[RMDB]
RNA sequence: GGGAACGACUCGAGUAGAGUCGAAAAUAGAGGUUUGUGGUCAUGGCUUUCGAACAAUGGCCUGUAGUUCAUUGGUCGAAUCAGGUCUGUGGUCUCGUGAUGCUGUUGAACGUCAGAUGAGCCACAACAUUACGACUGGGUUCGCCCAGUCGUAAUGAAAAGAAACAACAACAACAAC
Reactivity to 2A3 in 0.01 (KOAc 150mM, MgCl2 10mM, bicine 150mM(pH8.5), 24C), signal-to-noise 5, nucleotides 027 to 126: u140a020g050a030g050g080u050u080u070g020u040g020g030u030c030a040u050g060g020c010u010u050u040c020g020a020a010c040a030a060u090g000g010c040c030u050g150u150a090g040u070u040c000a020u070u090g080g020u060c040g030a040a070u120c060a050g040g000u020c040u050g040u030g020g020u030c010u000c070g080u050g010a060u100g000c040u030g050u110u040g030a050a010c000g020u040c020a020g020a190u060g000a040g050c000c000a000c000a000a030
Reactivity to DMS in 0.01 (KOAc 150mM, MgCl2 10mM, bicine 150mM(pH8.5), 24C), signal-to-noise 3, nucleotides 027 to 126: u040a080g020a090g000g010u010u000u010g020u010g020g010u000c040a070u010g010g020c040u000u020u000c040g000a000a070c050a010a040u000g010g000c040c100u010g020u020a090g010u010u020c000a050u000u010g000g010u000c020g030a070a050u050c110a110g000g000u000c010u000g030u010g000g000u030c000u000c010g040u000g000a060u010g010c080u010g020u030u020g020a090a220c030g000u000c020a070g000a090u030g000a070g010c000c000a010c040a110a130